Structure probing data (DMS and 2A3) for a 207-nucleotide construct. DMS adducts were read by reverse transcription with MarathonRT. 2A3 adducts were read by reverse transcription with SuperScript II with manganese. Source: RMDB library OK3TST, as collected in RNAgym. Values cover nucleotides 27 to 156. The 2A3 profile rests on 848 reads.
RNA sequence: GGGAACGACUCGAGUAGAGUCGAAAAAGUUUGUAUAAGCACUGUUUAAGAAUCCCAGUGCAUGCCAAUUGGUGUUUACAGACGAGUAUGGUAUUGACCAUAUGAUACUAUUCUCUCUCUCAGGAGAGGAGAAUAGAUAACUACAAAGGAUUUACAAUCCUAAAAUCGGAUUCGUCCGAUUUUAGGAAAAAGAAACAACAACAACAAC
Reactivity to DMS in 0.01 (KOAc 150mM, MgCl2 10mM, bicine 150mM(pH8.5), 24C), signal-to-noise 1, nucleotides 027 to 156: a180g000u000u000u000g000u000a070u000a080a130g030c010a090c040u000g020u010u000u010a130a200g000a130a050u000c060c070c010a100g010u000g030c040a120u010g010c060c020a160a220u010u010g040g000u000g030u010u000u000a090c080a140g010a090c000g010a220g020u000a060u000g000g000u000a200u020u020g000a120c000c000a000u000a010u010g010a160u000a060c010u020a010u000u010c000u000c000u000c000u010c000u000c240a200g060g020a030g000a020g000g000a020g010a010a010u000a000g010a130u010a060a090c090u020a160c110a090a090a120g010g000a100u000u000u000a100c070a040a200
Reactivity to 2A3 in 0.01 (KOAc 150mM, MgCl2 10mM, bicine 150mM(pH8.5), 24C), signal-to-noise 2, nucleotides 027 to 156: a000g080u060u050u030g030u010a080u030a170a000g000c000a000c030u030g050u070u060u100a220a030g040a050a020u000c010c010c000a010g000u010g000c000a010u040g020c000c030a280a300u190u300g000g010u020g030u080u090u000a010c000a010g060a010c000g000a010g020u030a010u020g000g030u030a090u260u100g160a060c000c000a000u010a020u040g050a020u010a160c000u000a010u000u000c000u000c000u000c000u000c000u040c110a120g300g000a030g040a000g030g070a010g000a000a010u000a000g010a000u080a020a050c010u030a000c060a100a070a040g040g000a060u000u020u110a120c090a030a070